[RMDB]
RNA sequence: GGGAACGACUCGAGUAGAGUCGAAAAUCGCAAAACCGCGGCAAGUGGAGUUAGCGAGAGGAGGCUGGGUUUUAGCUUCCUUAAGCAAUCGGUCACCGAGAAGGUGUGGUCGUUACCGUGAAAUUCCGUGACAAAAUAACGUUCGCGUUAUUUUGAAGCUAUUACACAGAUUCGUCUGUGUAAUAGCAAAAGAAACAACAACAACAAC
Reactivity to 2A3 in 0.01 (KOAc 150mM, MgCl2 10mM, bicine 150mM(pH8.5), 24C), signal-to-noise 5, nucleotides 027 to 156: u060c010g000c000a030a040a030a050c060c020g010c020g060g050c110a130a070g040u080g060g040a080g020u120u130a030g030c000g000a020g000a000g010g010a010g010g000c010u040g040g190g110u110u090u090u190a000g000c000u000u000c010c000u000u020a030a000g000c020a010a050u080c000g030g010u030c010a010c000c040g060a070g070a250a050g100g010u120g000u010g080g010u030c010g040u020u050a080c030c020g030u050g070a060a060a080u070u010c030c050g040u100g030a030c010a010a010a000a000u000a000a000c010g000u030u030c230g000c000g060u010u010a000u010u010u010u010g020a040a000
Reactivity to DMS in 0.01 (KOAc 150mM, MgCl2 10mM, bicine 150mM(pH8.5), 24C), signal-to-noise 2, nucleotides 027 to 156: u010c000g000c020a090a090a090a110c020c020g020c060g030g030c060a090a140g020u000g030g010a130g010u000u000a220g000c010g000a300g020a020g000g010a020g010g040c000u000g030g040g010u010u010u000u000a030g020c000u000u010c000c030u000u000a000a300g000c000a110a080u000c040g020g000u000c040a160c010c000g000a150g000a090a090g010g040u000g020u030g020g030u000c030g010u000u010a060c020c010g010u010g010a060a080a190u000u000c010c010g020u000g000a220c020a010a020a030a000u000a010a000c040g030u000u000c300g040c080g010u000u000a010u000u000u010u010g000a130a100
Chemical mapping of a 207-nucleotide RNA with 2A3 and DMS. High 2A3 reactivity points to a flexible backbone, as in loops and unpaired stretches. The reactions ran in a buffer of 150 mM KOAc, 10 mM MgCl2 and 150 mM bicine (pH 8.5), at 24 C. For DMS the reverse transcriptase was MarathonRT. For 2A3 the reverse transcriptase was SuperScript II with manganese. High DMS reactivity at an A or C suggests that its Watson-Crick edge is free. For 2A3, 4,379 sequencing reads were counted.